[RMDB]
RNA sequence: GGGAACGACUCGAGUAGAGUCGAAAAAACUGCGCUCGAUGGACGCGUUCGCUGACGCGCUGAACGUGACGCUGCGUCACUGCGUGCUUGCGGGCGGCGCGCAGCUGCGGAUUGGCGGCCUCAGCGACGCAGUGGAUGCUUUCGAGCAUCCACUGCGAAAAGAAACAACAACAACAAC
Reactivity to DMS in 0.01 (KOAc 150mM, MgCl2 10mM, bicine 150mM(pH8.5), 24C), signal-to-noise 2, nucleotides 027 to 126: a050a100c080u000g010c040g010c020u000c080g020a050u020g010g000a040c010g040c000g010u000u000c030g030c000u000g030a150c070g010c020g020c000u000g000a030a040c040g010u000g000a040c120g020c020u010g000c000g000u000c260a090c260u020g000c000g020u010g020c100u010u000g040c000g010g000g020c000g000g010c010g000c010g010c060a120g020c080u000g000c020g000g000a070u000u010g040g020c000g010g000c030c030u010c020a020g020c020g000a120
Reactivity to 2A3 in 0.01 (KOAc 150mM, MgCl2 10mM, bicine 150mM(pH8.5), 24C), signal-to-noise 3, nucleotides 027 to 126: a000a010c120u130g000c020g000c000u050c120g050a060u300g010g010a010c000g000c010g020u040u020c030g000c010u020g000a070c000g030c000g000c020u010g010a050a000c020g020u030g070a030c080g050c060u220g000c050g050u090c100a040c160u120g010c050g060u020g010c100u020u050g010c020g020g030g040c010g000g030c000g000c000g000c020a090g000c030u050g000c010g010g030a050u120u150g230g020c000g010g010c000c010u020c020a020g040c020g020a030